[RMDB]
RNA sequence: GGGAACGACUCGAGUAGAGUCGAAAACGUACGUGGAGACACGUACGACGAGACUUCGGUCUCGAAUCGCGCGAACUGGUGCAGCGCGCGCGCGAGGCGUCGGUGGUCGGCGAGCCCACGGACGCAAAAAUUCGCGCGGAAAUAAAUAGCAGUAGAACAGCAUUAUUUACUUCGGUAAAUAAUGCUGAAAAGAAACAACAACAACAAC
Reactivity to 2A3 in 0.01 (KOAc 150mM, MgCl2 10mM, bicine 150mM(pH8.5), 24C), signal-to-noise 2, nucleotides 027 to 156: c020g000u000a000c000g000u000g000g070a050g010a020c000a000c000g000u000a000c010g000a010c000g000a000g000a000c000u060u120c270g060g000u000c000u010c000g010a010a090u050c040g000c000g000c000g010a090a040c040u090g030g030u120g030c030a020g000c000g000c010g000c020g000c000g010c010g000a020g040g020c000g000u000c040g160g020u030g010g000u030c050g020g110c160g040a040g010c030c000c000a010c020g040g000a000c000g000c000a100a210a000a000a000u040u000c000g000c000g000c010g000g010a010a050a000u160a020a030a040u130a020g030c050a000g070u080a030g040a070a010
Reactivity to DMS in 0.01 (KOAc 150mM, MgCl2 10mM, bicine 150mM(pH8.5), 24C), signal-to-noise 1, nucleotides 027 to 156: c020g030u000a020c000g090u000g000g030a300g000a240c010a010c000g000u000a000c010g020a100c020g000a090g010a040c000u000u010c220g080g010u020c000u000c000g020a050a070u000c020g050c000g000c000g010a110a140c020u000g000g000u000g000c070a080g000c020g050c000g030c040g020c000g030c000g000a100g020g000c000g000u000c000g000g030u000g030g040u000c010g020g040c120g020a300g000c250c000c000a020c000g000g000a020c010g000c000a000a030a010a040a080u000u000c000g020c000g000c000g050g000a010a070a160u010a050a080a140u020a040g040c050a070g000u000a090g030a140a300

Conditions: 150 mM KOAc, 10 mM MgCl2 and 150 mM bicine (pH 8.5), 24 C. The record gives the reactivity of an RNA of 207 nucleotides to 2A3 and DMS. Values cover nucleotides 27 to 156. For 2A3 the reverse transcriptase was SuperScript II with manganese.